[RMDB]
RNA sequence: GGGAACGACUCGAGUAGAGUCGAAAAAUUGGCGAUCGCCGCGCUGCUGCUGCACGUGCUCGCCCACGGGAUCGGCAAGACCGUGCUGUUUCUGGCGGGCGGUCAGCUGCAGGCCGCACACGACUCCACCGCCCACCCUAUUCGUAGGGUGGGCGGUAAAAGAAACAACAACAACAAC
Reactivity to 2A3 in 0.01 (KOAc 150mM, MgCl2 10mM, bicine 150mM(pH8.5), 24C), signal-to-noise 1, nucleotides 027 to 126: a010u090u080g060g030c010g090a180u060c020g000c000c000g010c000g020c060u010g010c010u010g000c000u030g000c070a000c090g140u020g020c000u020c000g000c000c060c000a010c000g090g020g000a080u050c010g120g000c190a030a140g070a010c050c030g000u000g000c050u110g120u080u140u130c030u000g000g010c010g000g000g000c040g030g030u030c020a000g000c000u010g000c010a010g010g000c010c080g000c000a020c000a000c010g130a140c000u010c030c000
Chemical mapping of a 177-nucleotide RNA with 2A3. Conditions: 150 mM KOAc, 10 mM MgCl2 and 150 mM bicine (pH 8.5), 24 C.